[RMDB]
RNA sequence: GGGAACGACUCGAGUAGAGUCGAAAAUGUAAACUUAGGUAAAUCUGAUGUUGAAGUGUUUCCAAUCGCACUUGGGACGAACGCAGUAGGUGGGCAUAAUUUAUAUCCGAACUUAGAUGAAGAACAACGCGUCUACCUAAUUCGUUAGGUAGACGCGAAAAGAAACAACAACAACAAC
Reactivity to DMS in 0.01 (KOAc 150mM, MgCl2 10mM, bicine 150mM(pH8.5), 24C), signal-to-noise 1, nucleotides 027 to 126: u060g000u000a010a010a100c230u020u000a080g030g000u010a020a110a040u050c000u000g000a120u000g070u000u000g040a080a300g000u000g040u000u000u060c010c110a080a080u040c090g000c000a050c040u000u000g050g020g000a060c030g000a000a060c160g050c010a020g030u000a060g000g030u000g000g000g020c030a010u000a030a050u020u000u000a060u000a070u080c010c000g000a020a050c080u000u030a060g000a110u010g030a150a040g020a020a090c230a050a270
Reactivity to 2A3 in 0.01 (KOAc 150mM, MgCl2 10mM, bicine 150mM(pH8.5), 24C), signal-to-noise 1, nucleotides 027 to 126: u140g020u090a010a020a090c020u040u160a000g000g000u090a090a090a090u000c090u080g050a060u030g090u000u300g000a300a170g000u000g000u160u050u170c120c000a000a000u060c190g000c000a000c070u050u030g000g000g000a000c020g060a170a000c000g000c200a000g210u170a060g010g170u190g000g000g060c000a000u050a050a000u150u090u060a100u000a060u000c000c020g000a000a000c000u000u000a160g040a300u180g070a280a000g030a170a000c030a070a050